RNA sequence: GGGAACGACUCGAGUAGAGUCGAAAAGCCGAUGAAUUGCCGAGAAGCCUGGCUCGAAAUCGUCGACGCAUCGACGACGGUCCUGCCAUGAGACCGUAACGAGGACAUUUCGCCUCGAAUGGCGUCGUAUAACAUGAGUGGUUCGCCACUCAUGUAACUACCCGGUGAGAUUCGUCUCACCGGGUAGAAAAGAAACAACAACAACAAC
Reactivity to 2A3 in 0.01 (KOAc 150mM, MgCl2 10mM, bicine 150mM(pH8.5), 24C), signal-to-noise 2, nucleotides 027 to 156: g100c020c010g030a020u110g040a010a220u130u130g070c010c050g020a010g090a140a090g100c050c180u140g000g000c040u030c030g100a180a070a140u010c010g020u000c000g000a050c040g020c170a140u090c000g040a020c000g000a000c000g000g020u050c010c010u010g030c030c000a010u020g000a000g000a010c010c000g000u040a010a000c000g000a000g000g010a010c050a070u140u170u030c250g000c000c000u000c010g030a020a040u030g000g030c000g010u080c060g000u040a140u030a300a030c000a000u010g000a000g010u000g080g030u070u100c150g030c080c000a000c000u000c000a000u000g000u000a000a000